[RMDB]
RNA sequence: GGGAACGACUCGAGUAGAGUCGAAAAGAUAUGGACGUACUCCCCACCCGUGUACGUCGAAGAACUCGGAAACGAGGGAGACGGUAGCGGAGGUACGUCCUAAGUCAAAGCAGGCUUCGGCCUGCAAGAAAUUAUUCUGCUUCGGCAGAAUAAUUUCAAAAGAAACAACAACAACAAC
Reactivity to DMS in 0.01 (KOAc 150mM, MgCl2 10mM, bicine 150mM(pH8.5), 24C), signal-to-noise 2, nucleotides 027 to 126: g000a090u000a130u000g000g050a010c000g020u000a000c010u020c080c000c000c050a300c070c050c020g010u000g000u020a120c000g000u010c000g000a090a090g020a120a160c000u000c010g010g000a050a050a080c000g000a030g020g020g010a040g040a030c000g000g020u000a300g000c030g020g010a090g020g040u000a010c000g010u000c010c000u000a060a100g030u010c130a050a180a150g010c000a010g000g020c010u000u000c160g040g040c000c020u000g000c000a020a010
Reactivity to 2A3 in 0.01 (KOAc 150mM, MgCl2 10mM, bicine 150mM(pH8.5), 24C), signal-to-noise 1, nucleotides 027 to 126: g080a080u210a230u220g020g020a000c010g010u000a000c020u150c100c040c010c000a030c000c010c000g030u040g060u300a020c000g000u020c010g030a130a020g000a020a010c000u000c000g010g030a070a070a050c020g010a040g020g030g010a030g000a000c030g000g040u100a010g000c010g000g050a020g000g000u000a000c000g010u000c010c010u000a010a000g040u050c070a000a000a200g010c000a000g020g000c020u080u210c250g140g000c020c000u000g040c000a000a000
Overview:
This 177-nucleotide RNA was probed chemically with DMS and 2A3. It was measured as part of the RMDB library TTRDEL.